Conditions: 150 mM KOAc, 10 mM MgCl2 and 150 mM bicine (pH 8.5), 24 C. This 177-nucleotide RNA was probed chemically with DMS. For DMS the reverse transcriptase was MarathonRT.
[RMDB]
RNA sequence: GGGAACGACUCGAGUAGAGUCGAAAAUCAUGCACGUUCGCGUGCAUGAAAAGGCGGCGAGUAUCGCUGAGCGGCGCGCUACAGCGCGCAGCGCAGCUGGAAAAAGAUGAAUCUUCGGAUUCAUCAACGACUACUGAAGGUUCGCCUUCAGUAGUCGAAAAGAAACAACAACAACAAC
Reactivity to DMS in 0.01 (KOAc 150mM, MgCl2 10mM, bicine 150mM(pH8.5), 24C), signal-to-noise 1, nucleotides 027 to 126: u000c000a010u010g000c000a000c000g020u010u030c230g020c000g000u000g020c010a010u010g000a010a070a130a090g020g010c000g000g010c030g000a090g010u010a080u010c130g040c000u000g020a030g010c020g000g010c000g000c010g030c000u050a120c300a200g000c000g040c000g040c020a030g000c020g000c000a030g010c030u010g000g000a030a110a060a160a100g000a000u000g010a000a000u000c000u000u020c130g000g000a020u000u000c000a000u000c010a070a050